[RMDB]
RNA sequence: GGGAACGACUCGAGUAGAGUCGAAAAAGUGAGUAUGGCUCAUUACGACGAGCCAUACUCACAACGGUUUUCCUAAAUCGUCGUGAGACGGACCUUGGAAAACCUAGUAUUUAAAUAACUAGGUCAAAUUAGCCUAGAUCCUUCGGGAUCUAGGCAAUCAGUUUGACAUGUUCGCAUGUCAAACUGAAAAAGAAACAACAACAACAAC
Reactivity to 2A3 in 0.01 (KOAc 150mM, MgCl2 10mM, bicine 150mM(pH8.5), 24C), signal-to-noise 2, nucleotides 027 to 156: a000g010u000g000a000g000u000a000u000g000g000c010u000c040a040u090u250a120c250g040a030c080g000a040g000c000c000a000u000a000c000u010c000a000c010a000a000c010g000g000u000u000u000u010c010c000u000a000a000a000u060c020g000u000c000g020u020g130a110g020a030c000g000g000a010c000c010u010u020g000g000a010a000a000a010c000c000u000a010g020u020a020u020u160u110a090a140a100u130a080a030c050u030a020g000g000u000c000a010a040a180u200u160a070g000c000c000u020a010g010a000u000c010c000u000u090c250g090g000g000a000u040c000u010a000g000g000c000a000a000